[RMDB]
Chemical mapping of a 177-nucleotide RNA with DMS and 2A3. Conditions: 150 mM KOAc, 10 mM MgCl2 and 150 mM bicine (pH 8.5), 24 C. For 2A3 the reverse transcriptase was SuperScript II with manganese.
RNA sequence: GGGAACGACUCGAGUAGAGUCGAAAAACACGAGUCAGCUCAGACUUGUGCGAGUACCGAUUCUGCAAUCGGUGCAGAGUCUAGUCUACGCUGACUGGACUAGUAAGUGAUUGCAGAAUCACUUGCAGUCGCGUAGUAAUUUCGAUUACUACGCGACAAAAGAAACAACAACAACAAC
Reactivity to DMS in 0.01 (KOAc 150mM, MgCl2 10mM, bicine 150mM(pH8.5), 24C), signal-to-noise 3, nucleotides 027 to 126: a080c070a050c030g010a010g010u010c000a110g050c180u010c300a090g010a020c010u000u000g000u010g000c030g000a170g000u000a090c080c040g030a010u000u000c050u000g000c040a020a000u000c000g000g000u010g000c070a090g010a270g000u000c000u000a030g000u000c000u000a200c240g000c160u010g010a010c010u000g010g000a040c040u000a030g040u000a060a070g020u000g000a020u000u000g000c100a020g010a030a040u000c000a050c060u000u000g000c120a150
Reactivity to 2A3 in 0.01 (KOAc 150mM, MgCl2 10mM, bicine 150mM(pH8.5), 24C), signal-to-noise 3, nucleotides 027 to 126: a000c010a000c020g020a000g000u000c010a020g040c110u080c170a040g020a040c000u000u020g010u020g040c000g020a020g010u030a060c040c020g000a000u010u010c010u070g020c010a020a000u000c020g160g050u070g000c040a060g010a000g230u010c000u020a000g000u000c020u040a080c240g050c260u050g000a000c000u000g010g000a000c010u010a040g070u060a050a200g180u030g090a000u010u000g000c020a000g030a010a000u000c000a000c000u010u050g020c030a040